The record gives the reactivity of an RNA of 177 nucleotides to DMS.
RNA sequence: GGGAACGACUCGAGUAGAGUCGAAAAGAUUGGCCCAAUUUUCUUGAAAUCAUCCUACAAUGGAGUCUUUGUAAGCUGUUCAAAAUGGUACGAUAGAAAGACAACAAUACAGAUCCUUACGAGGGGCCCGUAGUCUAUACUUCGGUAUAGACUACGGAAAAGAAACAACAACAACAAC
Reactivity to DMS in 0.01 (KOAc 150mM, MgCl2 10mM, bicine 150mM(pH8.5), 24C), signal-to-noise 1, nucleotides 027 to 126: g000a050u000u000g000g040c020c000c000a080a080u000u000u020u000c030u000u000g000a090a090a010u000c040a070u000c020c030u010a040c100a060a050u010g000g010a300g000u000c060u010u000u040g000u000a060a230g010c030u010g010u000u040c040a010a100a100a100u010g000g000u010a030c070g010a150u000a070g010a070a040a060g000a020c030a000a140c010a040a060u040a090c150a090g000a100u000c070c000u010u010a090c140g040a090g040g000g000g000c220
The reactions ran in a buffer of 150 mM KOAc, 10 mM MgCl2 and 150 mM bicine (pH 8.5), at 24 C.